The record gives the reactivity of an RNA of 177 nucleotides to 2A3. The reactions ran in a buffer of 150 mM KOAc, 10 mM MgCl2 and 150 mM bicine (pH 8.5), at 24 C. It was measured as part of the RMDB library OK1LIB.
[RMDB]
RNA sequence: GGGAACGACUCGAGUAGAGUCGAAAACGUUCUUUCCGUGACUAUUUUUCUUCGAAUGGUGUAACUUGGCACUGAUGGAGGGCAAAAGGUUACUCAAUGUAUUAGAAAAUUUUCCUGCUCGCGACCACGGAGGUAAUCACUUCGGUGAUUACCUCCGAAAAGAAACAACAACAACAAC
Reactivity to 2A3 in 0.01 (KOAc 150mM, MgCl2 10mM, bicine 150mM(pH8.5), 24C), signal-to-noise 3, nucleotides 027 to 126: c030g070u060u080c000u070u040u040c050c010g000u020g010a040c030u010a180u030u030u010u010u000c030u020u030c030g130a100a050u100g050g000u040g000u000a100a150c050u010u040g070g000c000a040c090u050g050a160u200g110g110a090g000g010g050c050a000a090a080a160g060g010u020u020a060c010u070c060a030a070u200g080u110a100u070u030a020g090a010a030a030a070u020u070u050u030c000c000u020g050c030u030c010g010c010g110a060c010c060a100